[RMDB]
RNA sequence: GGGAACGACUCGAGUAGAGUCGAAAACGCUGGGAGUGCCGAGGUUGUCAGCUCGUACUGAAGCGCGCACGGUACGGAGCUUGGAUUUAUACAGCACUCCUGUGCUGAAGCGCGCACGGCAACCGAAAGGUGCGAAACCGAGGGUUCGCCCUCGGAAGGUAAUAUUUAUCUUCGGAUAAAUAUUACCAAAAGAAACAACAACAACAAC
Reactivity to DMS in 0.01 (KOAc 150mM, MgCl2 10mM, bicine 150mM(pH8.5), 24C), signal-to-noise 2, nucleotides 027 to 156: c110g030c000u000g030g040g010a080g050u000g030c000c020g060a120g020g030u000u010g020u000c040a120g000c010u010c020g000u000a120c060u000g020a070a110g050c020g030c020g000c000a300c000g000g030u000a020c000g010g020a060g010c020u000u000g030g010a160u010u010u000a170u020a090c040a090g000c020a030c010u000c030c010u000g010u000g010c000u000g020a120a100g020c010g020c020g060c030a060c100g000g000c020a120a100c020c020g030a130a170a220g010g010u010g010c020g010a090a090a130c020c020g000a060g000g020g000u000u000c170g020c040c000c000u010c000g010g020a000a050
Reactivity to 2A3 in 0.01 (KOAc 150mM, MgCl2 10mM, bicine 150mM(pH8.5), 24C), signal-to-noise 5, nucleotides 027 to 156: c070g000c020u050g000g020g000a010g010u010g000c030c050g090a160g110g120u300u270g080u080c010a000g000c020u020c020g010u030a020c010u050g030a200a050g000c020g000c000g000c020a020c000g000g010u020a000c050g160g040a040g000c040u090u110g010g010a030u020u170u130a220u170a050c030a000g000c000a000c000u010c000c000u010g010u040g000c030u070g020a100a020g000c000g010c000g000c000a000c000g080g000c030a100a080c000c000g030a080a040a000g000g010u020g000c020g030a090a020a010c000c000g010a010g020g010g000u060u050c140g100c010c000c000u010c000g000g020a010a030
About this RNA:
The record gives the reactivity of an RNA of 207 nucleotides to DMS and 2A3. For DMS, 4,234 sequencing reads were counted. DMS adducts were read by reverse transcription with MarathonRT.